[RMDB]
RNA sequence: GGGAACGACUCGAGUAGAGUCGAAAAGGUUGGGGCGCAAUUUGAUGAGUGCCGCCACUGCCCCCAAUGAAGAAGGGGAUAGGACUGGUGGGGUUAACCGUGCUUUCAAAUAUAUCUAUGCGGUACGUAGCCAUACGUGAUUCGUCACGUAUGGCUAAAAAGAAACAACAACAACAAC
Reactivity to DMS in 0.01 (KOAc 150mM, MgCl2 10mM, bicine 150mM(pH8.5), 24C), signal-to-noise 1, nucleotides 027 to 126: g080g020u000u000g000g010g000g000c200g020c040a050a150u000u000u010g000a170u000g010a090g000u000g030c040c000g020c010c070a090c110u000g000c020c030c000c000c010a050a060u000g050a120a150g000a160a130g000g000g010g010a100u010a060g000g000a120c110u000g000g010u010g000g020g000g040u000u030a060a030c130c020g000u040g010c130u000u000u000c070a040a040a090u000a020u010a070u000c090u000a060u010g020c140g020g030u000a040c050g000